[RMDB]
RNA sequence: GGGAACGACUCGAGUAGAGUCGAAAAUGGUGAUCCAAGUGCUCACAUGAAAACAAUAAAAAGGGUUGGGCAUGGUGGCUCACACCUGUAAUGCUAGCACUUUGGGAGAUUGAGACCGGUGGAUCACGGUGACUGAUCAGUUCGCUGAUCAGUCACCAAAAGAAACAACAACAACAAC
Reactivity to 2A3 in 0.01 (KOAc 150mM, MgCl2 10mM, bicine 150mM(pH8.5), 24C), signal-to-noise 1, nucleotides 027 to 126: u250g020g020u000g000a040u040c030c000a030a030g030u020g040c000u000c030a040c000a000u000g060a130a000a000a000c160a070a190u230a200a080a070a070a000g000g030g000u000u000g020g000g020c040a000u050g060g130u180g230g000c000u010c000a000c000a000c010c000u130g060u030a000a000u030g010c020u000a010g010c000a000c000u160u060u050g020g000g000a030g060a080u150u220g040a110g100a130c000c010g050g030u070g060g000a000u030c030a000c000
Reactivity to DMS in 0.01 (KOAc 150mM, MgCl2 10mM, bicine 150mM(pH8.5), 24C), signal-to-noise 1, nucleotides 027 to 126: u050g000g020u000g000a000u000c020c000a040a100g000u000g010c000u000c210a070c060a000u030g000a270a060a280a030c140a160a170u060a030a010a100a150a000g000g060g020u050u000g000g010g000c000a110u080g020g010u000g000g000c020u000c000a030c110a030c020c000u000g000u070a200a070u000g000c230u040a030g000c000a000c000u000u000u000g060g000g020a050g000a190u000u060g000a100g020a080c000c010g010g070u040g020g040a060u000c000a110c060